Annotation:
This 170-nucleotide RNA was probed chemically with DMS and 2A3. The reactions ran in a buffer of 150 mM KOAc, 10 mM MgCl2 and 150 mM bicine (pH 8.5), at 24 C. 2A3 adducts were read by reverse transcription with SuperScript II with manganese.
RNA sequence: GGGAACGACUCGAGUAGAGUCGAAAAAGUCAGGUGAUAUUAACGUUGUUGCAGCUUCCGGAUCUUUGACACGUAAAGUGAAGUUACUAUUUAGGGCUUCAUUUUAUUUCAAAGAAUUUGCUACCCGUACGUGGUAAGUUCGCUUACCACAAAAGAAACAACAACAACAAC
Reactivity to DMS in 0.01 (KOAc 150mM, MgCl2 10mM, bicine 150mM(pH8.5), 24C), signal-to-noise 5, nucleotides 027 to 129: a040g030u000c040a000g050g050u040g020a120u000a090u020u010a000a000c140g030u060u080g000u010u130g050c000a100g000c030u030u010c080c040g050g030a010u050c050u040u020u000g000a030c300a000c270g030u060a030a020a090g050u000g030a070a030g040u000u000a150c050u020a200u020u050u070a040g000g000g000c060u010u010c010a000u000u000u000u000a030u010u010u000c000a050a000a040g000a020a000u040u040u030g000c030u030a050c050c000c020g030u000a010c230
Reactivity to 2A3 in 0.01 (KOAc 150mM, MgCl2 10mM, bicine 150mM(pH8.5), 24C), signal-to-noise 6, nucleotides 027 to 129: a000g170u140c050a060g010g070u050g060a150u070a100u210u200a130a040c100g000u010u000g050u010u010g050c080a030g000c010u090u010c010c000g060g030a020u020c000u000u020u000g030a060c030a000c200g010u020a000a000a000g020u000g010a000a000g000u030u040a300c020u060a110u200u200u240a080g000g000g000c000u000u020c000a010u000u000u000u000a010u010u080u000c000a000a000a000g030a030a030u090u060u100g040c000u050a100c000c000c030g050u050a060c090